Structure probing data (DMS and 2A3) for a 177-nucleotide construct. The RNA was probed in 150 mM KOAc, 10 mM MgCl2 and 150 mM bicine (pH 8.5) at 24 C. For DMS the reverse transcriptase was MarathonRT.
RNA sequence: GGGAACGACUCGAGUAGAGUCGAAAAGGAGCAGGACCUGGCCUUCUGGUACGGGCCCCGCUGGCAGGAGGUCAUCCCCUACACACCAGCCAUGCAGCGCUAUGUGAAGCGGCUCCACGAGGUGGGGAGAUACGUUAUAAUUCGUUAUAACGUAUCUAAAAGAAACAACAACAACAAC
Reactivity to DMS in 0.01 (KOAc 150mM, MgCl2 10mM, bicine 150mM(pH8.5), 24C), signal-to-noise 9, nucleotides 027 to 126: g010g010a030g020c020a070g030g010a050c040c030u000g010g000c010c010u000u010c210u010g020g030u000a070c040g010g000g010c010c010c010c030g010c020u000g000g010c020a050g010g010a140g010g010u000c080a130u010c020c000c010c030u000a120c080a090c050a060c030c030a070g010c010c020a060u010g020c060a070g030c030g020c020u000a090u010g010u010g010a110a050g010c030g010g000c010u000c010c010a180c150g000a080g010g010u000g010g010g000g010
Reactivity to 2A3 in 0.01 (KOAc 150mM, MgCl2 10mM, bicine 150mM(pH8.5), 24C), signal-to-noise 9, nucleotides 027 to 126: g020g000a010g010c040a040g030g040a110c010c020u020g010g010c010c000u170u150c150u210g040g030u090a180c020g010g020g000c010c010c000c010g000c010u010g010g010c010a020g010g050a060g040g040u050c020a110u090c010c010c000c010u050a020c040a000c000a010c040c040a000g010c000c010a090u250g000c030a030g010c010g000c030u060a050u190g170u080g110a070a000g000c010g020g000c000u000c000c000a020c040g050a050g020g080u070g000g000g010g000